This 207-nucleotide RNA was probed chemically with DMS and 2A3. DMS adducts were read by reverse transcription with MarathonRT. Source: RMDB library M2RFPK, as collected in RNAgym. The reactions ran in a buffer of 150 mM KOAc, 10 mM MgCl2 and 150 mM bicine (pH 8.5), at 24 C. DMS (dimethyl sulfate) methylates the pairing face of unpaired adenines and cytosines.
RNA sequence: GGGAACGACUCGAGUAGAGUCGAAAAACAGUACCAGCUGCUACGGCAUCUGGUACUGAACUUUCAUGGAGUUAAGAAACCACGUAAACAAAGCGGAACCGAAAAGCUAAACGAGUAGGAAGAAUAAAUAGGUACCACCACUUCGGUGGUGGUACAACCUUUUAAGUGACUUCGGUCACUUAAAAGGAAAAGAAACAACAACAACAAC
Reactivity to DMS in 0.01 (KOAc 150mM, MgCl2 10mM, bicine 150mM(pH8.5), 24C), signal-to-noise 2, nucleotides 027 to 156: a140c000a010g010u000a020c010c000a000g040c100u010g030c000u000a160c290g080g020c010a010u040c020u010g050g010u000a080c020u010g000a000a040c050u000u000u000c040a060u000g010g030a150g000u000u000a160a190g010a090a110a130c010c010a020c040g020u000a180a110a060c070a090a110a050g000c000g000g020a090a120c040c030g000a040a030a080a060g030c000u000a080a080a120c130g000a090g000u000a120g000g010a060a070g010a060a090u000a030a140a100u000a060g040g000u010a010c000c000a010c000c000a000c010u010u000c280g050g070u000g020g000u010g030g030u010a000c010a040a030
Reactivity to 2A3 in 0.01 (KOAc 150mM, MgCl2 10mM, bicine 150mM(pH8.5), 24C), signal-to-noise 5, nucleotides 027 to 156: a010c000a000g000u010a000c000c000a000g010c020u010g010c000u010a050c200g170g000c000a010u010c010u000g000g000u000a000c000u000g000a000a000c000u040u100u060c060a110u100g090g010a040g070u100u110a150a040g110a110a070a020c020c010a060c060g070u150a040a050a130c080a080a110a000g000c000g020g040a060a110c000c010g020a010a000a000a000g020c060u160a220a030a000c010g010a000g000u010a010g100g040a040a020g040a060a050u190a140a050a040u180a090g130g000u000a000c000c000a000c000c000a000c010u030u060c200g090g000u000g000g000u010g000g000u000a000c000a000a000